The record gives the reactivity of an RNA of 177 nucleotides to DMS.
Conditions: 150 mM KOAc, 10 mM MgCl2 and 150 mM bicine (pH 8.5), 24 C.
RNA sequence: GGGAACGACUCGAGUAGAGUCGAAAAAAGUGUGGGCUCAACGAUUGUUGCUACGAAUGAUACAACAGUACCGAAUGUAGCCACACAACUUGCCAUAAAUGGAUUGGGAGAGCUCGCGGGACAUGCAUAUCACUAGCGACUUCGGUCGCUAGUGAUAAAAAGAAACAACAACAACAAC
Reactivity to DMS in 0.01 (KOAc 150mM, MgCl2 10mM, bicine 150mM(pH8.5), 24C), signal-to-noise 1, nucleotides 027 to 126: a060a060g020u000g040u000g030g070g040c010u010c040a020a230c040g000a050u000u010g010u010u000g090c070u000a120c070g000a080a080u010g020a150u010a050c010a120a100c120a070g030u000a100c100c020g000a110a030u030g060u030a010g020c000c050a060c050a030c010a030a090c130u000u010g000c010c010a110u010a050a070a090u030g000g010a070u020u000g000g000g000a150g010a070g010c010u000c000g010c060g000g060g010a030c100a090u010g000c080a120